[RMDB]
RNA sequence: GGGAACGACUCGAGUAGAGUCGAAAAACAUGCUGGCCAACCCAACCCCACGAUCCUCCAUCGGCAUGAUCAUGAUGUGUUCUCAAAUAUAAGGCCAGUAAAUCACCAUGCUCGUGCUGGUAAAGGCAACUUAUGCCCAAGUUCGCUUGGGCAUAAAUAUCCUCACAAUAUUCGUAUUGUGAGGAUAAAAAGAAACAACAACAACAAC
Reactivity to DMS in 0.01 (KOAc 150mM, MgCl2 10mM, bicine 150mM(pH8.5), 24C), signal-to-noise 3, nucleotides 027 to 156: a030c000a080u000g030c020u010g000g000c000c020a130a190c080c030c030a110a170c020c010c020c020a080c160g020a150u000c020c020u000c010c020a050u010c030g010g000c020a050u000g020a030u010c040a020u010g010a030u000g010u000g010u000u000c050u000c040a110a090a110u000a110u000a140a170g020g020c030c010a050g020u000a010a060a070u020c030a030c010c020a020u000g000c110u010c020g040u000g020c000u000g010g020u000a020a030a040g020g010c100a040a090c070u010u000a000u000g000c020c000c010a030a040g020u000u010c290g050c050u000u010g000g000g000c000a000u000a000a010a090
Reactivity to 2A3 in 0.01 (KOAc 150mM, MgCl2 10mM, bicine 150mM(pH8.5), 24C), signal-to-noise 4, nucleotides 027 to 156: a000c030a020u070g010c000u000g010g010c000c010a060a060c070c000c030a040a060c050c040c040c020a090c070g050a100u070c000c020u030c020c010a030u030c010g010g010c000a000u000g000a000u020c010a000u020g050a050u070g030u000g030u090u020c050u020c030a060a080a000u200a040u060a210a040g010g000c000c010a000g000u010a020a030a030u060c010a020c030c000a000u000g000c000u010c020g010u020g010c000u010g000g000u030a120a100a030g020g010c010a030a030c060u030u010a000u000g000c000c000c000a010a000g000u020u060c100g000c140u000u000g030g010g000c000a000u000a000a000a000
This 207-nucleotide RNA was probed chemically with DMS and 2A3. Reactivities are given for positions 27 through 156. Source: RMDB library M2RFOK, as collected in RNAgym. Conditions: 150 mM KOAc, 10 mM MgCl2 and 150 mM bicine (pH 8.5), 24 C. The DMS profile rests on 7,109 reads.